[RMDB]
RNA sequence: GGGAACGACUCGAGUAGAGUCGAAAAGUGCUUGAGCACGGAGAGUUCGCUCUCGGUCGUUGAUGCGAAGGCCUAAGCAUUUGCGACGGAUGUCGAAGGCCUAAGACAUCGGUGCUCUUGCACGAAAGGGACAGCCGUGCUUCGGCAUGGUUGUCCCAAAAGAAACAACAACAACAAC
Reactivity to DMS in 0.01 (KOAc 150mM, MgCl2 10mM, bicine 150mM(pH8.5), 24C), signal-to-noise 7, nucleotides 027 to 126: g000u000g010c000u000u010g010a010g010c010a010c010g010g010a020g000a020g010u010u060c210g010c000u010c000u000c000g010g010u020c110g010u020u010g010a010u000g010c010g000a270a070g000g000c010c000u000a150a300g000c010a010u000u010u020g010c070g000a050c080g000g020a000u000g000u040c000g000a200a070g000g010c020c010u000a080a220g000a120c000a000u000c010g010g010u000g030c000u000c000u010u000g000c010a000c010g000a040a090a110
Reactivity to 2A3 in 0.01 (KOAc 150mM, MgCl2 10mM, bicine 150mM(pH8.5), 24C), signal-to-noise 9, nucleotides 027 to 126: g000u000g000c000u010u010g000a000g000c000a010c040g030g000a000g000a000g010u120u180c230g020c110u000c000u000c010g030g060u090c050g060u050u120g010a010u000g010c010g070a120a050g080g020c010c000u030a040a010g000c000a010u000u020u130g060c060g050a040c080g050g010a010u020g040u120c020g030a100a050g060g020c000c010u010a040a010g030a020c000a000u000c010g010g000u000g000c000u000c000u000u000g000c000a000c000g000a040a010a010
Structure probing data (DMS and 2A3) for a 177-nucleotide construct. The reactions ran in a buffer of 150 mM KOAc, 10 mM MgCl2 and 150 mM bicine (pH 8.5), at 24 C. For 2A3, 57,095 sequencing reads were counted.